[RMDB]
An RNA of 207 nucleotides, treated with 2A3 and read out base by base. For 2A3, 1,903 sequencing reads were counted. Values cover nucleotides 27 to 156. Conditions: 150 mM KOAc, 10 mM MgCl2 and 150 mM bicine (pH 8.5), 24 C. 2A3 adducts were read by reverse transcription with SuperScript II with manganese. Source: RMDB library RNAMAK, as collected in RNAgym.
RNA sequence: GGGAACGACUCGAGUAGAGUCGAAAAGAUAUGGACCAAAGGGAGCUGAAAGUUCGUUGAUCAACGAUCGGAAACGAUCGUUGGGAGAACUUGAUCAGCGAAGAACUUUGGUCCUAAGUCAAAGAUCUUCAACGUUGUUCGCAACGUUGAAGAUCAAGGUGAAUUCAACGUUCGCGUUGAAUUCACCAAAAGAAACAACAACAACAAC
Reactivity to 2A3 in 0.01 (KOAc 150mM, MgCl2 10mM, bicine 150mM(pH8.5), 24C), signal-to-noise 1, nucleotides 027 to 156: g010a030u040a010u050g000g000a000c000c000a000a000a000g060g000g000a140g000c010u020g000a040a030a000g000u000u000c030g150u300u020g000a030u010c000a000a000c000g000a000u010c020g000g030a040a040a020c000g000a010u030c000g010u000u000g010g000g000a000g000a000a010c010u020u060g060a160u020c000a000g000c010g040a040a000g020a000a010c000u000u000u030g030g000u000c010c000u000a000a000g000u000c030a000a040a180g000a000u010c000u000u010c000a000a000c000g000u000u020g030u150u140c290g050c130a000a000c000g000u010u000g000a000a000g000a000u000c000a000a000